RNA sequence: GGGAACGACUCGAGUAGAGUCGAAAAACAGCAGGCCGCGUUGUCGUGACGCAACUGCACCACGUUACGCUGCCAGCGGUUGGUGAUGAUCUUGGCUCUGGUGGGGUUUUCCUUCAAAGCGCGUUGCCCGUUUUCGGAGCUGACGUCCAUCUCCACGCUACUACACCCACUUCGGUGGGUGUAGUAGAAAAGAAACAACAACAACAAC
Reactivity to 2A3 in 0.01 (KOAc 150mM, MgCl2 10mM, bicine 150mM(pH8.5), 24C), signal-to-noise 2, nucleotides 027 to 156: a000c070a010g080c030a030g000g020c000c010g010c020g010u030u030g120u170c030g010u020g020a030c060g000c130a140a150c150u300g020c010a020c090c000a000c000g050u100u070a010c010g000c010u010g000c010c000a040g000c000g030g070u150u040g000g010u030g010a030u010g020a060u010c010u060u160g010g010c000u000c010u010g080g040u120g020g070g000g000u140u070u060u160c060c000u120u180c120a100a140a090g120c120g020c020g040u050u050g040c000c020c010g050u020u020u050u230c010g010g000a000g030c000u000g000a000c030g020u030c090c010a020u020c010u020c030c000a040c060g040